[RMDB]
RNA sequence: GGGAACGACUCGAGUAGAGUCGAAAAGUCAUUAACGCGUGUGCACUCUCUAACACGAAUUACCCAGUUAUUUUCGACUUUACUCGAGUCGUUAUAGCGUGAUAUGUGAGAGUAAUCCGCGACCAAAUAAUUUCAUUAAGUUCGCUUAAUGAAAUUAAAAAGAAACAACAACAACAAC
Reactivity to DMS in 0.01 (KOAc 150mM, MgCl2 10mM, bicine 150mM(pH8.5), 24C), signal-to-noise 4, nucleotides 027 to 126: g010u010c130a100u010u000a020a040c090g010c020g020u000g020u000g000c100a080c030u010c010u000c020u000a070a060c010a010c000g010a150a090u000u010a110c060c060c060a130g000u000u000a040u000u010u000u000c000g020a010c010u000u000u000a000c000u010c020g000a000g000u000c000g000u000u000a020u010a080g020c010g020u010g000a030u000a060u010g010u010g010a080g010a080g010u000a100a080u000c020c000g010c010g000a160c030c020a070a080a100